The record gives the reactivity of an RNA of 177 nucleotides to DMS and 2A3. For DMS, 1,965 sequencing reads were counted. The RNA was probed in 150 mM KOAc, 10 mM MgCl2 and 150 mM bicine (pH 8.5) at 24 C. Values cover nucleotides 27 to 126.
RNA sequence: GGGAACGACUCGAGUAGAGUCGAAAAGAUAUGGACCGUUACGGGAGAAGGUCGGAAACGACACUUCAUCGAUCGUACGGUCCUAAGUCAAAACGAUACAUCCAUGGUUCGCCAUGGAUGUAUCGAACCUACAUCAACCCUUCGGGGUUGAUGUAGGAAAAGAAACAACAACAACAAC
Reactivity to DMS in 0.01 (KOAc 150mM, MgCl2 10mM, bicine 150mM(pH8.5), 24C), signal-to-noise 2, nucleotides 027 to 126: g010a030u000a300u000g010g000a020c020c000g010u000u000a010c000g020g000g010a070g000a010a000g010g020u000c000g000g010a080a110a200c000g030a000c000a060c020u000u000c020a270u000c160g020a090u000c000g010u000a010c000g020g010u000c000c000u000a020a070g000u010c010a080a040a120a150c000g000a020u000a010c010a000u000c010c000a010u000g020g010u000u000c220g030c020c000a020u000g000g000a000u000g000u000a000u000c000g000a020a060
Reactivity to 2A3 in 0.01 (KOAc 150mM, MgCl2 10mM, bicine 150mM(pH8.5), 24C), signal-to-noise 3, nucleotides 027 to 126: g010a000u080a050u130g020g000a010c000c000g050u210u200a010c020g020g050g000a060g010a000a000g000g000u010c010g040g020a060a110a020c020g030a040c190a240c300u030u010c040a300u300c030g050a070u090c020g010u000a000c000g020g000u000c000c000u000a020a000g010u010c030a000a010a040a120c020g010a000u000a000c000a000u000c010c000a000u000g020g060u070u070c300g040c110c000a000u000g000g010a000u000g000u000a000u000c000g000a000a000